An RNA of 177 nucleotides, treated with DMS and 2A3 and read out base by base. The reactions ran in a buffer of 150 mM KOAc, 10 mM MgCl2 and 150 mM bicine (pH 8.5), at 24 C.

RNA sequence: GGGAACGACUCGAGUAGAGUCGAAAACGGGGAGCUCUUGCGGGCAGGAGACUCUUUUGCAGGCUUGCUGGGAAGCCUUUCAUCUUGGCUGUGGUUCCUCCCAGAGCUGUCUCCCAGACAGCAGGGCGUAUCCUCUGCUAUUCGUAGCAGAGGAUACAAAAGAAACAACAACAACAAC
Reactivity to DMS in 0.01 (KOAc 150mM, MgCl2 10mM, bicine 150mM(pH8.5), 24C), signal-to-noise 3, nucleotides 027 to 126: c140g010g000g000g000a100g030c020u000c070u010u000g010c070g030g000g010c080a060g010g000a060g010a100c070u010c040u010u000u010u030g020c280a060g030g000c030u000u010g010c010u000g000g000g010a160a040g000c020c000u010u000u010c110a100u010c080u000u010g010g030c020u000g010u000g020g000u000u000c040c030u000c000c000c010a080g000a090g000c000u000g010u000c030u000c020c030c030a260g010a020c010a020g010c000a150g010g000g020c270
Reactivity to 2A3 in 0.01 (KOAc 150mM, MgCl2 10mM, bicine 150mM(pH8.5), 24C), signal-to-noise 2, nucleotides 027 to 126: c050g050g000g010g030a020g020c020u000c020u120u120g050c110g060g110g060c040a010g020g020a030g030a050c020u050c020u090u130u120u240g020c030a000g040g000c000u050u090g030c020u080g000g050g010a010a010g000c000c000u030u060u100c070a110u020c040u020u080g030g060c020u020g020u050g090g000u030u010c000c000u020c010c010c000a030g030a040g010c010u010g000u000c020u030c020c030c000a000g000a000c000a000g010c000a010g060g060g000c070